This 177-nucleotide RNA was probed chemically with 2A3. Values are in units of 0.01, from 0 to 300, in steps of 10. 2A3 adducts were read by reverse transcription with SuperScript II with manganese. Source: RMDB library OK1LIB, as collected in RNAgym.
[RMDB]
RNA sequence: GGGAACGACUCGAGUAGAGUCGAAAAGCUCGGAGACGAGCAAGGCUGACAAAACGAUGUCCCAACCUCCACGUGGUGUCGGCUGGAUAAUGCUGCAUUAUGUUGCAUUUAUCAACUGGGAAACAAAAUCACCGCUAGGCUUCGGCCUAGCGGUGAUAAAAGAAACAACAACAACAAC
Reactivity to 2A3 in 0.01 (KOAc 150mM, MgCl2 10mM, bicine 150mM(pH8.5), 24C), signal-to-noise 1, nucleotides 027 to 126: g070c000u090c000g000g010a070g010a080c000g010a000g000c000a000a030g040g020c000u020g000a000c010a000a140a000a010c000g120a000u110g010u000c020c000c000a000a060c000c000u000c000c040a100c040g130u150g030g000u010g000u000c000g000g000c000u010g070g000a000u000a070a000u000g000c010u000g000c010a040u300u080a240u300g010u020u060g000c000a000u000u070u190a020u000c010a020a020c030u040g010g010g000a000a100a000c090a020a070a000